[RMDB]
RNA sequence: GGGAACGACUCGAGUAGAGUCGAAAAGAUAUGGAUUCGCUUUGAUCAAAAUGCGUAUAUCGGAAACGAUAUAUACGCAAUGGGAGCGAAUCCUAAGUCAAAAUCGUCGGCGUUCGCGCCGACGAAACAGUUCUCAUAUCUUCGGAUAUGAGAACUGAAAAGAAACAACAACAACAAC
Reactivity to 2A3 in 0.01 (KOAc 150mM, MgCl2 10mM, bicine 150mM(pH8.5), 24C), signal-to-noise 3, nucleotides 027 to 126: g010a000u010a010u020g000g000a010u010u000c000g020c050u090u100u150g220a280u300c190a200a280a220a210u150g000c010g010u030a000u000a000u010c000g010g000a010a010a000c010g000a000u010a000u010a000u020a070c020g010c010a090a150u180g010g010g000a000g000c000g000a010a000u000c000c010u000a010a010g010u000c010a040a010a030a300u070c000g010u020c010g040g030c030g030u070u150c260g020c040g030c090c020g000a010c020g010a000a000a000
Reactivity to DMS in 0.01 (KOAc 150mM, MgCl2 10mM, bicine 150mM(pH8.5), 24C), signal-to-noise 2, nucleotides 027 to 126: g000a020u000a060u000g000g000a030u000u010c010g010c010u000u000u010g010a120u010c200a090a090a120a070u000g010c000g030u000a010u000a010u000c020g000g010a020a010a060c000g030a020u000a030u000a080u010a080c020g010c000a040a140u010g010g000g000a000g010c010g000a020a010u010c000c000u010a000a090g010u000c000a060a050a130a140u000c000g020u000c010g010g000c020g050u010u010c200g010c030g030c000c000g000a000c010g010a010a030a140